RNA sequence: GGGAACGACUCGAGUAGAGUCGAAAAAUCAAGACUUCAGCAACUCAUGUUGGCCACCAUGUGGAAUUAACGACGAAUCACAAAGUUGACAUAGAAACACUUCCUCUCUUGAGCCCGAAGCAAUGGGUCUCUAGUAGGAGUUCGCUCCUACUAGAGAAAAAGAAACAACAACAACAAC
Reactivity to DMS in 0.01 (KOAc 150mM, MgCl2 10mM, bicine 150mM(pH8.5), 24C), signal-to-noise 3, nucleotides 027 to 126: a070u000c030a070a100g000a070c060u000u000c020a050g010c020a060a070c070u000c090a090u000g010u010u010g010g010c040c060a050c100c060a050u010g030u000g020g000a090a030u000u020a070a100c090g000a070c090g000a090a090u000c080a050c090a060a060a100g010u010u010g020a050c070a040u000a040g000a110a070a060c140a040c060u000u000c030c010u000c070u000c020u010u000g000a070g000c010c010c000g000a060a070g030c150a060a080u010g000g020g010
Reactivity to 2A3 in 0.01 (KOAc 150mM, MgCl2 10mM, bicine 150mM(pH8.5), 24C), signal-to-noise 2, nucleotides 027 to 126: a000u060c040a030a000g080a050c020u060u030c070a010g020c000a050a040c030u020c100a080u090g010u060u040g120g000c010c020a010c040c040a090u130g050u050g060g070a090a110u150u070a120a010c040g130a010c020g030a100a070u130c030a050c040a140a110a000g020u040u020g070a030c020a030u120a060g070a030a070a000c040a000c050u070u000c000c000u020c000u000c000u010u030g000a020g010c000c010c040g000a040a000g010c050a020a130u110g010g050g060